[RMDB]
RNA sequence: GGGAACGACUCGAGUAGAGUCGAAAAAUAGCUCUGCCAAGCUGAGUCUUAAGCAGAUCUCUUCCAAGACAUAUUCCACGCCACCCAUGCGAUGCAUUAUUGGAAACUUUGCAGUCUAGGAAGGAUGAUGAUUGGCAGUAUUUACCAAGGAGAACCAGAUUAUACCGCCAUUCGUGGCGGUAUAAUCAAAAGAAACAACAACAACAAC
Reactivity to DMS in 0.01 (KOAc 150mM, MgCl2 10mM, bicine 150mM(pH8.5), 24C), signal-to-noise 2, nucleotides 027 to 156: a080u000a050g050c080u000c000u000g000c000c030a060a080g010c030u000g010a300g000u000c040u000u000a110a170g010c130a170g010a080u000c040u000c110u000u020c040c020a140a100g020a100c000a110u000a110u000u010c050c030a080c250g010c040c050a100c080c070c060a270u010g000c070g010a070u000g030c130a090u000u000a180u000u000g000g010a000a060a140c050u000u000u010g010c030a150g000u010c050u000a120g020g010a110a070g000g000a050u000g030a210u000g000a070u000u000g020g000c000a040g020u000a100u000u000u000a050c050c050a030a080g050g000a070g040a070a090c030c040a220
Reactivity to 2A3 in 0.01 (KOAc 150mM, MgCl2 10mM, bicine 150mM(pH8.5), 24C), signal-to-noise 3, nucleotides 027 to 156: a000u090a030g030c050u000c000u030g040c020c000a030a010g070c070u120g070a070g080u070c050u130u250a110a040g040c030a040g020a160u000c030u000c000u040u000c000c020a020a000g000a000c000a020u130a100u020u060c030c010a020c000g030c000c020a060c120c020c010a010u100g000c010g040a040u050g070c020a050u080u170a100u130u220g050g050a000a040a040c030u040u080u080g050c100a010g010u000c020u040a030g030g000a010a000g030g010a020u070g030a040u040g000a000u010u120g020g000c000a010g000u000a030u030u130u050a020c000c010a040a030g080g020a140g070a050a000c030c030a020
Source: RMDB library OK3TST, as collected in RNAgym. The record gives the reactivity of an RNA of 207 nucleotides to DMS and 2A3. The reactions ran in a buffer of 150 mM KOAc, 10 mM MgCl2 and 150 mM bicine (pH 8.5), at 24 C. The 2A3 profile rests on 1,416 reads. The DMS profile rests on 2,399 reads. In probing experiments dimethyl sulfate is read out at A N1 and C N3, which are open when not base-paired.